[RMDB]
RNA sequence: GGGAACGACUCGAGUAGAGUCGAAAAGCUGGCCGGCCCUGCGAUGAUCGAUCGCGAUCGGCCGAUAGGCGCUAUGCGCGGAUCGAUCGGCCGAGCGUACUGCGCUCGUACACUGCGCACGUACCUGCCGAGUACACCUUUUCGAAGGUGUACUCGGAAAAGAAACAACAACAACAAC
Reactivity to DMS in 0.01 (KOAc 150mM, MgCl2 10mM, bicine 150mM(pH8.5), 24C), signal-to-noise 3, nucleotides 027 to 126: g000c050u000g020g010c010c020g010g000c060c040c090u000g010c040g000a070u010g030a060u000c050g010a060u010c000g010c020g000a080u010c150g000g000c000c010g010a060u000a070g010g030c030g000c070u010a120u000g000c070g000c000g010g010a080u000c050g010a030u000c010g020g020c070c000g000a030g020c140g010u000a040c090u000g000c000g000c010u000c120g000u000a090c150a100c050u000g010c010g010c010a040c190g010u000a030c000c090u000g000
Reactivity to 2A3 in 0.01 (KOAc 150mM, MgCl2 10mM, bicine 150mM(pH8.5), 24C), signal-to-noise 3, nucleotides 027 to 126: g000c050u050g000g000c020c000g000g050c000c010c010u070g000c050g100a130u160g020a060u060c020g030a010u020c020g020c000g040a060u040c020g040g000c000c000g020a040u060a040g070g000c020g000c140u120a060u300g070c050g000c000g030g050a100u070c040g010a010u000c010g040g020c020c010g020a020g000c020g000u020a030c030u070g010c000g000c000u040c080g070u100a060c080a030c130u070g020c010g000c000a020c070g010u010a070c000c000u030g040